RNA sequence: GGGAACGACUCGAGUAGAGUCGAAAACAGCUGCACGUCUCUGUGUGGCAAUUUAUCAACCUGGAGGAGGAUUUGUUUCCGCAAUGCAAUACAAGAAUAAAUCUGUGCGUAUGACGAGGCACCAAGCAGCUUAAUCGCUAUUCGUAGCGAUUAAGCUAAAAGAAACAACAACAACAAC
Reactivity to 2A3 in 0.01 (KOAc 150mM, MgCl2 10mM, bicine 150mM(pH8.5), 24C), signal-to-noise 1, nucleotides 027 to 126: c020a010g000c010u010g000c050a000c010g140u060c110u040c050u280g010u000g000u020g000g030c020a000a000u040u030u070a120u030c020a000a080c000c030u020g080g000a060g090g010a050g040g010a050u180u000u140g160u060u060u020c010c050g000c020a070a040u030g000c010a020a010u050a190c010a090a060g070a150a100u130a170a190a040u060c060u050g040u010g040c010g010u050a070u100g030a010c040g030a040g090g000c050a040c040c010a080a010g050c030
Reactivity to DMS in 0.01 (KOAc 150mM, MgCl2 10mM, bicine 150mM(pH8.5), 24C), signal-to-noise 2, nucleotides 027 to 126: c180a210g010c000u000g000c030a030c040g010u000c150u040c110u010g050u000g020u000g020g020c000a050a030u020u000u010a060u020c110a090a130c030c000u000g000g020a100g000g010a070g000g010a090u010u000u000g000u000u000u000c020c050g020c130a070a100u000g000c070a030a030u000a090c160a090a100g000a040a040u000a060a090a110u000c010u000g010u000g030c120g020u000a060u000g000a120c090g000a060g000g010c060a070c030c050a050a080g030c140

Chemical mapping of a 177-nucleotide RNA with 2A3 and DMS. Conditions: 150 mM KOAc, 10 mM MgCl2 and 150 mM bicine (pH 8.5), 24 C. Reactivities are given for positions 27 through 126. Values are in units of 0.01, from 0 to 300, in steps of 10. The DMS profile rests on 1,556 reads. Source: RMDB library OK2TST, as collected in RNAgym.